An RNA of 177 nucleotides, treated with 2A3 and DMS and read out base by base. For DMS the reverse transcriptase was MarathonRT. 2A3 is a SHAPE reagent: it acylates the 2'-hydroxyl of flexible nucleotides of all four kinds. Reactivities are given for positions 27 through 126. DMS (dimethyl sulfate) methylates the pairing face of unpaired adenines and cytosines. It was measured as part of the RMDB libraries RFM100 and RFMREP. For 2A3 the reverse transcriptase was SuperScript II with manganese. The RNA was probed in 150 mM KOAc, 10 mM MgCl2 and 150 mM bicine (pH 8.5) at 24 C.
RNA sequence: GGGAACGACUCGAGUAGAGUCGAAAAGAAAAUAUGCAUGCACACACAUUCAUGAAGAGAAGAGAAAUGGUGAGUGUUCCCAUUUGAGUGAGAACCACCCAGUGCAGGUAGCUGCUGUGAGCUUUGCGCUAGAAAACCAGUUCGCUGGUUUUCUAGCAAAAGAAACAACAACAACAAC
Reactivity to 2A3 in 0.01 (KOAc 150mM, MgCl2 10mM, bicine 150mM(pH8.5), 24C), signal-to-noise 3, nucleotides 027 to 126: g090a000a090a030a030u170a010u080g010c060a000u020g020c020a020c000a000c000a000c000a070u000u060c010a030u160g100a130a070g060a040g050a280a020g080a010g030a030a110a050u070g080g000u060g030a040g000u060g010u030u030c000c010c000a000u060u040u100g060a080g010u020g000a090g040a030a010c010c000a000c030c040c000a020g020u030g020c020a000g050g070u070a040g030c030u050g010c030u030g030u030g050a030g030c000u020u050u060g030c060
Reactivity to DMS in 0.01 (KOAc 150mM, MgCl2 10mM, bicine 150mM(pH8.5), 24C), signal-to-noise 3, nucleotides 027 to 126: g000a100a060a090a050u040a050u000g000c010a050u000g040c040a030c050a070c080a080c050a060u000u020c020a050u000g000a040a080g000a080g010a090a060g020a100g000a070a100a040u020g000g020u020g000a060g000u020g000u010u000c010c010c000a090u020u010u010g030a070g040u000g000a070g020a080a140c100c020a090c030c030c050a060g000u010g000c040a010g020g030u010a050g010c030u010g000c060u000g000u000g010a060g010c010u000u010u010g000c250